[RMDB]
RNA sequence: GGGAACGACUCGAGUAGAGUCGAAAACAGCGGUUCGCCGCUGAUCAUUGGGGUCGACGACAUGCCGCUGAGCAACAGCUACCUGAAGCCUCCACGGGUAGACAUGCUCAUGCAACAGCGUCGACGGAGGCACCCUACACGCCCGAUUCGUCGGGAAUAGGCUUUAUUUAUUCGUAAAUAAAGCCUAAAAAGAAACAACAACAACAAC
Reactivity to DMS in 0.01 (KOAc 150mM, MgCl2 10mM, bicine 150mM(pH8.5), 24C), signal-to-noise 3, nucleotides 027 to 156: c020a030g020c000g020g010u000u010c290g000c010c010g020c000u000g000a030u000c060a130u010u000g020g020g020g020u000c020g020a090c020g020a120c030a110u000g010c010c040g000c060u010g000a070g010c030a070a100c040a180g010c010u000a010c010c010u000g010a080a140g030c030c000u000c020c000a300c050g020g000g000u000a010g000a080c090a240u000g010c000u010c010a140u000g010c020a040a030c020a040g000c090g030u000c010g020a090c000g030g020a050g030g040c030a100c030c000c000u020a100c100a070c110g010c010c010c000g000a130u010u000c150g050u000c020g010g020g000a080a150
Reactivity to 2A3 in 0.01 (KOAc 150mM, MgCl2 10mM, bicine 150mM(pH8.5), 24C), signal-to-noise 7, nucleotides 027 to 156: c010a000g010c010g030g050u080u150c230g040c080c000g010c000u050g020a090u120c100a100u060u230g060g020g020g000u010c010g000a010c000g020a060c040a100u090g020c020c020g040c080u030g010a000g010c010a030a120c030a120g030c000u010a010c000c010u040g040a130a030g040c000c020u070c030c030a010c010g010g000g000u010a000g060a040c030a070u200g000c000u000c000a030u150g010c010a060a080c030a100g150c010g010u000c000g000a010c000g000g000a010g000g020c020a050c000c010c000u090a080c140a050c150g060c040c000c000g000a010u050u070c170g050u010c010g130g000g000a000a020
An RNA of 207 nucleotides, treated with DMS and 2A3 and read out base by base.
The data come from the RNA Mapping Database (RMDB), library RNAMAK.